[RMDB]
RNA sequence: GGGAACGACUCGAGUAGAGUCGAAAAGAUAUGGACAUGACCUCAGGCGAAGAACUACCUCGGAAACGAGGUAGGGAGCCUAAGGUAUGUCCUAAGUCAAACCAGGCUUUGUUCGCAAAGCCUGGAACUAACCUUGAACGUUCGCGUUCAAGGUUAGAAAAGAAACAACAACAACAAC
Reactivity to 2A3 in 0.01 (KOAc 150mM, MgCl2 10mM, bicine 150mM(pH8.5), 24C), signal-to-noise 3, nucleotides 027 to 126: g030a030u070a070u200g000g020a000c010a020u090g300a200c010c010u010c060a020g030g000c010g300a300a020g000a060a060c000u000a010c000c000u000c010g020g020a070a100a050c010g010a000g000g000u000a000g010g000g000a020g000c000c000u010a020a000g000g000u000a000u000g000u010c000c000u010a110a020g070u040c050a060a020a100c000c010a000g010g000c000u020u020u050g030u050u150c300g010c200a000a010a000g020c000c020u000g000g000a010a010
Reactivity to DMS in 0.01 (KOAc 150mM, MgCl2 10mM, bicine 150mM(pH8.5), 24C), signal-to-noise 3, nucleotides 027 to 126: g000a060u010a300u000g000g000a020c000a000u000g010a050c010c000u000c040a030g020g000c010g010a140a180g030a150a250c010u010a000c010c000u000c000g010g000a130a070a300c020g000a020g020g010u000a000g000g000g000a110g010c000c000u000a000a010g020g000u000a000u010g000u000c000c000u020a010a070g030u000c020a160a110a240c000c000a020g010g020c000u000u000u010g000u000u010c290g030c020a020a010a010g000c010c000u000g000g000a010a080
This 177-nucleotide RNA was probed chemically with 2A3 and DMS. Source: RMDB library TTRDES, as collected in RNAgym. As a SHAPE reagent, 2A3 marks flexible, mostly unpaired nucleotides at the ribose 2'-OH. DMS adducts were read by reverse transcription with MarathonRT. The RNA was probed in 150 mM KOAc, 10 mM MgCl2 and 150 mM bicine (pH 8.5) at 24 C.